[RMDB]
RNA sequence: GGGAACGACUCGAGUAGAGUCGAAAAGAUAUGGACCCGUACGACAUGCGAGAGGUUCGGAAACGAACCGUUCGCAACAGCGUACUUGGGUCCUAAGUCAAAAGGCUACCCGUUCGCGGGUAGCCAAUCGAACCUUAAGGUUCGCCUUAAGGUUCGAAAAAGAAACAACAACAACAAC
Reactivity to 2A3 in 0.01 (KOAc 150mM, MgCl2 10mM, bicine 150mM(pH8.5), 24C), signal-to-noise 3, nucleotides 027 to 126: g010a000u000a010u050g000g010a000c000c020c000g000u000a000c000g050a050c120a300u300g000c000g000a000g000a020g020g020u020u010c000g000g000a030a000a000c000g010a000a000c000c000g020u010u000c010g010c000a110a020c100a050g010c010g000u010a000c030u100u300g020g000g000u000c000c000u010a010a000g010u000c010a050a050a180a010g000g000c000u010a000c000c010c000g030u050u090c300g010c030g090g010g000u000a000g000c000c000a010a010
Reactivity to DMS in 0.01 (KOAc 150mM, MgCl2 10mM, bicine 150mM(pH8.5), 24C), signal-to-noise 5, nucleotides 027 to 126: g000a010u000a050u010g000g000a010c000c010c000g000u000a010c000g010a030c070a300u010g020c010g000a010g010a070g000g010u000u000c000g030g000a020a020a050c000g020a000a010c000c000g010u000u000c010g020c010a080a060c230a140g010c000g010u000a000c000u010u020g030g000g010u010c000c000u000a000a060g000u000c010a110a120a160a130g000g000c010u000a000c000c000c000g030u000u010c260g030c020g010g000g010u000a000g000c000c010a010a010